[RMDB]
RNA sequence: GGGAACGACUCGAGUAGAGUCGAAAAAAUCGUCGACGCAUCGACGACGGUGCUGCCAUGAGACCGUAACGAGGACAUGUCGCCUCGAAUGGCGUCGGGGAGCCGGCAGCUUACCCCAAGGAUGAGCAAAAGAAUGAAACGUUCGCGUUUCAUUCAACAAGGUAAAAUUGUUCGCAAUUUUACCUUGAAAAGAAACAACAACAACAAC
Reactivity to DMS in 0.01 (KOAc 150mM, MgCl2 10mM, bicine 150mM(pH8.5), 24C), signal-to-noise 2, nucleotides 027 to 156: a070a050u000c000g020u000c000g010a060c150g030c100a110u000c000g020a060c000g000a010c030g000g030u000g000c040u010g020c020c040a190u000g010a160g010a100c000c030g020u000a110a160c040g000a080g010g010a080c050a200u000g020u010c110g010c020c000u010c000g020a120a080u000g040g040c000g040u000c020g000g010g010g010a140g030c060c060g050g030c030a090g000c030u000u000a050c020c000c010c050a120a210g010g000a130u000g020a160g010c120a120a080a140a190g010a020a020u000g000a020a010a020c020g000u000u000c270g050c070g010u010u000u010c000a020u000u000c000a050a100
Reactivity to 2A3 in 0.01 (KOAc 150mM, MgCl2 10mM, bicine 150mM(pH8.5), 24C), signal-to-noise 5, nucleotides 027 to 156: a000a010u020c010g000u000c000g010a040c070g000c120a070u040c030g020a020c010g000a000c000g010g020u030g000c010u010g000c010c010a110u140g100a090g030a090c020c030g030u060a060a040c020g010a040g000g010a060c040a160u220g080u230c130g010c010c010u030c030g010a020a060u100g020g030c080g030u080c050g010g030g010g020a040g100c040c040g030g010c000a010g000c010u020u090a100c000c000c010c010a010a030g150g000a040u100g030a010g070c080a030a050a030a080g010a000a010u010g010a000a000a000c000g030u080u110c240g010c000g110u000u020u000c000a010u010u000c000a000a000
About this RNA: This 207-nucleotide RNA was probed chemically with DMS and 2A3. Source: RMDB library M2RFPK, as collected in RNAgym. For DMS, 3,380 sequencing reads were counted. For 2A3 the reverse transcriptase was SuperScript II with manganese.